[RMDB]
RNA sequence: GGGAACGACUCGAGUAGAGUCGAAAACGGCGCCUCGCCGGUGUACAGCCCCUGCUUCAAGUUCUUCACGCCGGCGGAGGUGUCGGCGAAGGACCGCUGCAUGAGCCGGCUGAUCGCGGAGGUGGGCAUAUCUAGCGUCGUUCGCGACGCUAGAUAUAAAAGAAACAACAACAACAAC
Reactivity to DMS in 0.01 (KOAc 150mM, MgCl2 10mM, bicine 150mM(pH8.5), 24C), signal-to-noise 1, nucleotides 027 to 126: c010g000g000c010g030c010c010u000c040g000c020c010g000g040u000g000u000a100c220a140g000c040c020c020c060u000g010c080u000u000c190a080a080g000u010u000c030u000u020c130a100c020g040c000c000g020g000c010g040g010a030g010g010u000g030u000c000g020g030c030g000a110a060g000g000a070c050c030g000c060u000g010c090a050u010g020a110g020c050c060g010g010c030u020g000a080u010c030g000c070g010g000a100g000g000u020g010g010g010c030

This 177-nucleotide RNA was probed chemically with DMS. Conditions: 150 mM KOAc, 10 mM MgCl2 and 150 mM bicine (pH 8.5), 24 C. Values are in units of 0.01, from 0 to 300, in steps of 10.